[RMDB]
RNA sequence: GGGAACGACUCGAGUAGAGUCGAAAACUAGGGUACGGAUCUCGUGCUACAUCACUCUAGGUACCUCACUAGCGACUAGAUGAUCCACAUGGUGUCAGCGAGUACGUCAUGGAUCCGGAUCCAUGGCGGUUCCUGCAAGUUUCGACUUGCAGGAACCAAAAGAAACAACAACAACAAC
Reactivity to 2A3 in 0.01 (KOAc 150mM, MgCl2 10mM, bicine 150mM(pH8.5), 24C), signal-to-noise 3, nucleotides 027 to 126: c020u070a090g010g000g020u030a020c030g000g040a040u030c090u020c080g040u040g000c020u080a050c010a090u060c010a020c030u020c010u020a040g090g000u100a100c010c030u040c040a080c080u090a020g030c050g130a060c040u020a030g010a180u080g000a050u040c040c020a090c030a120u180g050g000u070g050u050c030a020g040c040g090a010g030u040a020c040g030u060c080a060u070g040g000a000u020c000c050g050g030a010u000c010c000a000u030g070g010c040
Reactivity to DMS in 0.01 (KOAc 150mM, MgCl2 10mM, bicine 150mM(pH8.5), 24C), signal-to-noise 3, nucleotides 027 to 126: c020u000a080g030g020g020u000a020c040g000g020a030u000c010u010c070g000u000g010c040u000a050c050a060u000c050a060c120u000c040u000a130g010g030u000a180c100c010u000c170a120c190u010a090g010c070g030a100c060u010a070g000a050u000g030a060u000c180c080a110c140a110u010g020g010u000g010u000c080a090g020c080g000a070g020u000a060c070g000u010c030a030u010g000g000a010u000c020c100g010g000a100u000c000c000a050u000g000g000c210